[RMDB]
RNA sequence: GGGAACGACUCGAGUAGAGUCGAAAAACAGAAAAAAGGAGUUUAAAUUAGAUUUGCAAACGGACGGUACUAAAUACCGUCACUUUUACUUCUAACUUAUCGUUAACUCUGCAAAAAGAAAACAAGAAAAACAAGCGUGAGUUCGCUCACGCUUGAACCAUAAGCUUUUCUUCGGAAAAGCUUAUGGAAAAGAAACAACAACAACAAC
Reactivity to 2A3 in 0.01 (KOAc 150mM, MgCl2 10mM, bicine 150mM(pH8.5), 24C), signal-to-noise 1, nucleotides 027 to 156: a000c010a030g070a100a080a070a000a010a070g080g000a080g010u120u170u080a030a080a030u090u000a030g020a020u020u050u130g040c070a060a030a000c060g030g000a000c000g000g000u000a010c030u240a060a120a140u070a020c000c000g010u000c000a000c000u010u000u010u000a010c000u000u050c000u020a020a060c060u030u060a040u110c030g040u030u040a000a000c000u000c000u060g060c070a070a000a030a070a050g050a020a060a030a030c090a040a030g100a120a040a080a020a020c000a000a000g020c000g000u020g000a000g030u020u060c150g000c050u000c000a000c010g020c000u000u000g010a000a000